[RMDB]
RNA sequence: GGGAACGACUCGAGUAGAGUCGAAAAACGGGCAGUGGCGAUGGCAACGCGGCAGCCGCAGGGUCGACUUCUUCGCAGCCGCAACAGACGGGCGACGGGCAAAGAGGGGUGCUCGUUCUGUUGGAAGCAGUCGAGUACGUUUCGACGUACUCGACUGAAAAGAAACAACAACAACAAC
Reactivity to DMS in 0.01 (KOAc 150mM, MgCl2 10mM, bicine 150mM(pH8.5), 24C), signal-to-noise 1, nucleotides 027 to 126: a040c140g010g020g020c040a030g000u020g040g000c030g000a040u000g000g020c070a090a030c060g000c020g010g060c050a140g000c030c050g000c140a080g000g040g000u030c050g030a130c030u010u000c030u030u020c050g040c060a080g020c000c080g060c040a040a000c030a030g000a030c040g000g020g000c000g000a020c110g020g000g000c030a080a110a100g000a020g000g040g010g010u010g000c000u000c050g020u000u040c040u000g000u010u000g000g000a040a000g000
Reactivity to 2A3 in 0.01 (KOAc 150mM, MgCl2 10mM, bicine 150mM(pH8.5), 24C), signal-to-noise 3, nucleotides 027 to 126: a000c020g010g030g030c060a040g040u060g040g000c060g080a140u120g070g000c050a100a050c030g000c020g040g000c020a020g030c020c020g020c030a020g040g020g000u070c020g010a060c020u090u030c000u030u020c020g010c060a020g020c010c030g010c010a010a020c000a040g020a000c000g000g000g020c020g010a030c040g000g030g050c090a070a110a030g070a070g000g010g010g010u050g040c000u000c000g030u100u030c000u000g010u000u000g020g020a030a010g000
An RNA of 177 nucleotides, treated with DMS and 2A3 and read out base by base.
Conditions: 150 mM KOAc, 10 mM MgCl2 and 150 mM bicine (pH 8.5), 24 C.
The DMS profile rests on 1,490 reads.
Values cover nucleotides 27 to 126.
It was measured as part of the RMDB library OK1LIB.
For 2A3 the reverse transcriptase was SuperScript II with manganese.